[RMDB]
RNA sequence: GGGAACGACUCGAGUAGAGUCGAAAAUGGUUUUGUUUUGCCUUUAGGUGCUACUGUCAAUAUGAAUGGUACUGCGAUAUUUCAAGGUAUGGCAGCAGUAUUUAUUGCUCAGGCCUAUAACUGUCCACGUACAAGAUCCCUUCGGGGAUCUUGUACGAAAAGAAACAACAACAACAAC
Reactivity to 2A3 in 0.01 (KOAc 150mM, MgCl2 10mM, bicine 150mM(pH8.5), 24C), signal-to-noise 1, nucleotides 027 to 126: u060g000g060u090u110u030u090g070u060u050u050u090g050c000c000u060u040u060a020g000g030u040g060c010u050a030c000u040g030u090c020a020a020u090a060u240g160a060a070u160g010g000u010a020c000u020g000c020g030a030u000a050u060u170u070c180a140a040g110g020u050a020u080g000g010c030a040g010c000a000g010u000a000u020u110u010a040u010u020g000c030u000c040a010g100g000c000c000u060a050u040a120a070c040u040g040u090c030c010a070
Reactivity to DMS in 0.01 (KOAc 150mM, MgCl2 10mM, bicine 150mM(pH8.5), 24C), signal-to-noise 1, nucleotides 027 to 126: u000g000g010u000u000u000u000g000u010u000u010u000g010c100c090u000u000u000a040g010g010u000g000c030u000a150c030u000g000u010c010a050a040u000a050u010g030a060a050u010g000g030u000a040c020u010g010c190g010a050u000a050u000u010u010c220a080a220g020g010u010a040u000g020g020c070a050g010c000a020g000u000a030u010u000u010a020u000u000g010c010u000c060a030g000g010c000c040u000a060u000a050a110c090u010g000u010c010c030a120